Background
Structure probing data (2A3 and DMS) for a 177-nucleotide construct. 2A3 adducts were read by reverse transcription with SuperScript II with manganese. For 2A3, 4,661 sequencing reads were counted. The RNA was probed in 150 mM KOAc, 10 mM MgCl2 and 150 mM bicine (pH 8.5) at 24 C.
[RMDB]
RNA sequence: GGGAACGACUCGAGUAGAGUCGAAAAAACUGCACCUGUCACGCUUCGCCAACAUGGCUCGGUGACAUGCGGAUGUGUGGGGUCUCACGGAGCGUGGCCGAAUCUCACGAAUGAUGGGGCCAUCAGGACCUGUAUUCGACUUCGGUCGAAUACAGGUAAAAGAAACAACAACAACAAC
Reactivity to 2A3 in 0.01 (KOAc 150mM, MgCl2 10mM, bicine 150mM(pH8.5), 24C), signal-to-noise 6, nucleotides 027 to 126: a010a000c060u060g010c020a030c050c010u030g000u020c030a010c030g120c020u060u050c030g030c050c020a130a100c070a300u230g000g000c010u020c050g070g030u070g050a030c010a070u070g010c050g100g050a140u110g050u020g010u070g030g020g010g040u000c030u020c040a060c020g070g010a050g000c020g020u010g010g030c000c000g040a030a040u020c020u000c020a070c080g080a170a080u120g010a040u050g050g060g060g010c050c010a050u080c060a030g040g100
Reactivity to DMS in 0.01 (KOAc 150mM, MgCl2 10mM, bicine 150mM(pH8.5), 24C), signal-to-noise 4, nucleotides 027 to 126: a050a040c030u000g010c020a030c080c080u000g000u010c010a040c040g020c110u000u030c220g010c010c020a120a050c150a110u020g000g000c030u010c210g000g020u000g000a060c110a030u010g010c110g010g020a080u010g010u000g050u040g000g000g030g000u000c000u000c040a170c010g000g000a100g030c050g010u000g000g000c030c030g040a170a050u030c030u010c110a120c140g010a120a030u000g010a040u000g000g020g000g010c040c010a040u010c080a130g000g000